[RMDB]
RNA sequence: GGGAACGACUCGAGUAGAGUCGAAAAGAAGAAUUGGACUUAACUGUUAAAGACAGAGAGAUAUCGUCUCAUCAUCACCAUCAUCAUGGGAUUAAAAGUAUGACUUACACGUUUACAGGUCCGAUUGGAAGAACCUUCGCUUCGGCGAAGGUUCUUCAAAAGAAACAACAACAACAAC
Reactivity to 2A3 in 0.01 (KOAc 150mM, MgCl2 10mM, bicine 150mM(pH8.5), 24C), signal-to-noise 1, nucleotides 027 to 126: g020a100a000g060a000a080u000u000g000g050a000c000u130u000a080a000c000u040g060u000u130a030a000a060g100a020c050a060g110a010g020a040g000a110u010a100u300c120g160u000c000u000c000a010u060c000a000u050c000a050c120c060a050u020c000a100u000c000a040u080g000g060g000a020u030u050a020a180a030a020g070u030a080u150g010a040c000u030u070a050c100a000c230g030u070u070u240a010c010a000g030g030u000c000c010g100a130u000u100g060